[RMDB]
RNA sequence: GGGAACGACUCGAGUAGAGUCGAAAAAAGGAAAGCUUCAUUCCCGGUUUCGAUGGUCAGCUUGACGAUAGGAUUAGUGAAUCGGCCGUGCAAUCCAUUUCCGCAGAAUUUAAUUCUACAUCUUUAAGUUUUAGGGUAGGUUCGCCUACCCUAAAACAAAAGAAACAACAACAACAAC
Reactivity to DMS in 0.01 (KOAc 150mM, MgCl2 10mM, bicine 150mM(pH8.5), 24C), signal-to-noise 1, nucleotides 027 to 126: a070a060g000g010a020a030a300g000c090u010u000c080a120u000u000c100c030c000g030g040u000u000u000c030g060a070u020g020g000u040c060a080g050c140u030u010g010a030c030g010a160u010a110g000g020a090u000u000a060g010u000g000a100a080u010c050g000g000c190c050g010u000g010c070a030a180u000c040c000a060u000u020u000c010c020g020c160a040g010a030a040u000u000u000a050a070u000u000c030u010a050c060a100u010c050u030u000u000a100a140